Source information
The record gives the reactivity of an RNA of 207 nucleotides to DMS and 2A3. The RNA was probed in 150 mM KOAc, 10 mM MgCl2 and 150 mM bicine (pH 8.5) at 24 C. 2A3 adducts were read by reverse transcription with SuperScript II with manganese. Reactivities are given for positions 27 through 156.
[RMDB]
RNA sequence: GGGAACGACUCGAGUAGAGUCGAAAAGGGCCGUUCACUGGAUCCGAAGCCUCUAGAAGGAUUAUAUAGGCACUCCAUACCCUACUCCGACUCAAUACGUCCCCGUCGUACAGAAUGGUAACAUAUCGAACACAACCUAACUUCGGUUAGGUUGUAAGUUACUCCUGAAGUUCGCUUCAGGAGUAACAAAAGAAACAACAACAACAAC
Reactivity to DMS in 0.01 (KOAc 150mM, MgCl2 10mM, bicine 150mM(pH8.5), 24C), signal-to-noise 1, nucleotides 027 to 156: g040g040g160c070c050g020u000u030c000a140c060u000g000g020a080u000c050c050g000a240a120g000c020c060u000c040u010a100g000a230a100g000g000a070u000u000a120u000a090u000a090g000g050c020a030c070u050c070c030a200u000a050c000c000c010u000a100c080u000c020c010g000a020c030u010c020a110a170u010a130c030g000u000c000c000c000c000g020u000c010g040u020a190c070a150g010a130a100u010g000g020u000a090a120c050a080u010a070u010c030g000a070a180c130a060c020a020a000c000c000u000a030a020c000u010u000c300g100g010u000u000a000g010g000u010u000g010u010a000a070
Reactivity to 2A3 in 0.01 (KOAc 150mM, MgCl2 10mM, bicine 150mM(pH8.5), 24C), signal-to-noise 3, nucleotides 027 to 156: g020g020g010c090c130g130u210u110c110a070c090u120g040g000a100u220c030c020g010a040a010g020c050c040u040c020u090a140g070a140a050g240g020a060u250u000a090u100a070u110a220g000g050c000a010c040u000c000c000a040u050a030c000c000c000u010a050c050u030c060c010g000a020c000u010c000a040a080u080a090c020g080u020c000c000c000c000g040u050c000g020u070a060c020a070g100a120a130u140g110g000u090a100a000c030a060u220a110u210c060g060a140a020c020a000c000a080a010c000c000u010a000a010c010u010u060c120g040g010u000u000a010g000g000u000u000g000u000a000a000